[RMDB]
RNA sequence: GGGAACGACUCGAGUAGAGUCGAAAAAAAGAGAUGGGCCGAGCAGCGGGCCAGCGCGUAGCCGCGAAGAUCGACUCCGAUCUGAUCGCUACCGCAGCGCGUUACGCGACCCACGUCGCCACCACUGGCGACAACAGCACCGGAACGCUAGGCGGCGAAAUGCUCCUAGAUUCGUCUAGGAGCAUUUAAAAGAAACAACAACAACAAC
Reactivity to 2A3 in 0.01 (KOAc 150mM, MgCl2 10mM, bicine 150mM(pH8.5), 24C), signal-to-noise 2, nucleotides 027 to 156: a000a000a000g130a000g050a080u030g010g000g020c040c020g010a050g000c050a000g040c030g070g110g040c040c060a140g000c010g020c070g000u000a030g070c190c060g000c080g030a030a010g000a010u010c000g130a160c160u050c180c070g010a040u000c030u010g030a070u060c020g000c000u010a030c000c030g000c010a000g000c120g020c010g010u040u030a030c060g020c000g030a090c000c000c000a010c030g000u000c010g020c000c000a100c090c020a090c240u080g000g000c010g020a010c010a010a040c020a020g020c010a030c040c040g060g010a140a040c010g020c110u040a080g050g000c020g010g000c010g040
Reactivity to DMS in 0.01 (KOAc 150mM, MgCl2 10mM, bicine 150mM(pH8.5), 24C), signal-to-noise 2, nucleotides 027 to 156: a080a140a190g000a140g020a130u000g000g010g080c020c010g010a050g020c050a060g020c000g020g010g060c010c020a030g050c000g060c140g010u000a050g030c020c050g000c020g020a230a060g000a020u000c000g010a230c150u020c180c010g000a000u020c000u000g000a200u000c000g000c010u000a050c000c000g060c010a280g050c060g010c000g030u000u000a020c000g010c020g030a090c020c000c050a110c170g010u000c030g040c010c000a060c070c150a210c150u000g000g020c000g040a080c020a020a020c080a080g000c070a200c050c000g000g000a070a080c030g010c040u000a070g010g000c050g000g000c010g020